Structure probing data (2A3 and DMS) for a 177-nucleotide construct. DMS adducts were read by reverse transcription with MarathonRT. For DMS, 1,243 sequencing reads were counted. In probing experiments dimethyl sulfate is read out at A N1 and C N3, which are open when not base-paired. The reactions ran in a buffer of 150 mM KOAc, 10 mM MgCl2 and 150 mM bicine (pH 8.5), at 24 C. Reactivities are given for positions 27 through 126. 2A3 is a SHAPE reagent: it acylates the 2'-hydroxyl of flexible nucleotides of all four kinds.
RNA sequence: GGGAACGACUCGAGUAGAGUCGAAAACAAAGUCAUUUAAUUACAGGGGAUGCUAUGAACACGUUUUCUCAAGUCUGGGUAUUCAGCGAUACCCCUUCUCGUCUGCCGGAACUGAUGAACGGUGCGCCACAGAGUGAGACUUCGGUCUCACUCUGUGAAAAGAAACAACAACAACAAC
Reactivity to 2A3 in 0.01 (KOAc 150mM, MgCl2 10mM, bicine 150mM(pH8.5), 24C), signal-to-noise 2, nucleotides 027 to 126: c020a000a080a020g050u060c010a050u050u160u300a300a150u200u150a060c060a080g000g020g010g020a000u090g040c040u080a020u180g090a110a010c050a000c040g010u000u030u060u020c060u020c020a020a020g060u040c030u050g040g000g000u040a060u030u160c050a040g060c010g040a030u140a140c000c000c010c050u060u110c020u000c010g260u040c040u090g120c030c010g000g050a110a060c030u080g030a060u070g010a110a000c010g090g020u020g010c010g080c060
Reactivity to DMS in 0.01 (KOAc 150mM, MgCl2 10mM, bicine 150mM(pH8.5), 24C), signal-to-noise 2, nucleotides 027 to 126: c110a120a050a050g000u010c090a080u010u000u020a080a100u000u020a100c110a050g000g000g010g000a140u010g020c060u000a070u010g010a100a120c180a080c100g000u000u000u000u000c170u010c040a140a080g020u010c030u000g000g020g050u000a040u000u040c060a050g020c100g000a070u000a080c020c000c000c020u000u000c100u000c010g020u000c060u000g070c080c040g000g020a050a050c050u000g000a030u000g010a040a050c050g000g010u000g020c090g000c180